The data come from the RNA Mapping Database (RMDB), library OK3TST.
An RNA of 207 nucleotides, treated with 2A3 and read out base by base.
[RMDB]
RNA sequence: GGGAACGACUCGAGUAGAGUCGAAAAGUGAGAGAUCACACGAACACACACGUUCGAACGAUCGAACUCUCGUGUUCACGAUCGUGUUCUCUCUCUCUCGUGAGUGUUCACGAGAGUUCACGUACACGAACGAUCGUUCGAUCACGAUCUCGAGAACGCCUCCCUCGGGGUUCGCCCCGAGGGAGGCAAAAGAAACAACAACAACAAC
Reactivity to 2A3 in 0.01 (KOAc 150mM, MgCl2 10mM, bicine 150mM(pH8.5), 24C), signal-to-noise 1, nucleotides 027 to 156: g050u090g000a040g000a010g000a050u010c010a050c010a010c050g000a010a010c060a010c060a000c000a030c100g000u010u000c010g010a040a000c010g050a180u130c160g000a000a000c020u020c010u010c010g010u000g000u000u020c010a010c010g010a040u010c020g000u020g090u300u070c070u020c020u020c000u000c010u010c010u010c060g000u030g040a030g020u020g000u000u020c010a010c010g020a000g070a000g000u000u010c000a000c000g030u040a050c090a030c040g040a050a000c020g000a060u090c110g000u000u010c010g000a130u060c070a010c170g000a010u000c000u000c000g000a040g010a040a030c020
Overview: The RNA was probed in 150 mM KOAc, 10 mM MgCl2 and 150 mM bicine (pH 8.5) at 24 C. Reactivities are given for positions 27 through 156. For 2A3, 1,329 sequencing reads were counted.